Structure probing data (DMS and 2A3) for a 177-nucleotide construct.
The reactions ran in a buffer of 150 mM KOAc, 10 mM MgCl2 and 150 mM bicine (pH 8.5), at 24 C.
For 2A3, 108,973 sequencing reads were counted.
For 2A3 the reverse transcriptase was SuperScript II with manganese.

[RMDB]
RNA sequence: GGGAACGACUCGAGUAGAGUCGAAAACGGACUUCGAGGGAUUGCUCAUUAACUCUGGUUAUGUAGUAAUAUAGCCAUAGAAGUCUCUCGUUAGAAUGUCAUGCAGAAUUAUGACAUUCAUCGUCUAGGUACUCGGACAUUUCGAUGUUUGAGUACCAAAAGAAACAACAACAACAAC
Reactivity to DMS in 0.01 (KOAc 150mM, MgCl2 10mM, bicine 150mM(pH8.5), 24C), signal-to-noise 9, nucleotides 027 to 126: c160g010g000a010c010u010u000c000g000a130g000g000g000a020u000u000g000c050u020c100a090u020u020a050a100c050u010c170u030g010g010u000u000a010u000g010u050a080g020u020a050a020u010a050u030a100g010c000c010a040u020a180g000a080a030g010u000c000u010c030u000c030g010u020u020a070g000a010a000u000g000u010c000a010u000g000c240a130g030a150a150u060u020a010u000g000a010c010a000u000u000c000a060u020c100g010u010c040u000a110
Reactivity to 2A3 in 0.01 (KOAc 150mM, MgCl2 10mM, bicine 150mM(pH8.5), 24C), signal-to-noise 9, nucleotides 027 to 126: c040g010g010a010c010u020u010c020g000a030g020g010g020a020u020u070g060c040u070c160a090u160u240a080a050c020u020c050u090g060g000u010u000a010u020g080u060a080g070u070a160a080u070a020u030a090g040c000c000a020u040a060g040a040a010g010u000c000u000c000u000c000g020u010u010a040g000a000a000u000g000u000c000a000u030g050c090a040g140a300a080u240u120a010u050g000a000c000a000u010u000c000a050u100c040g050u000c020u020a050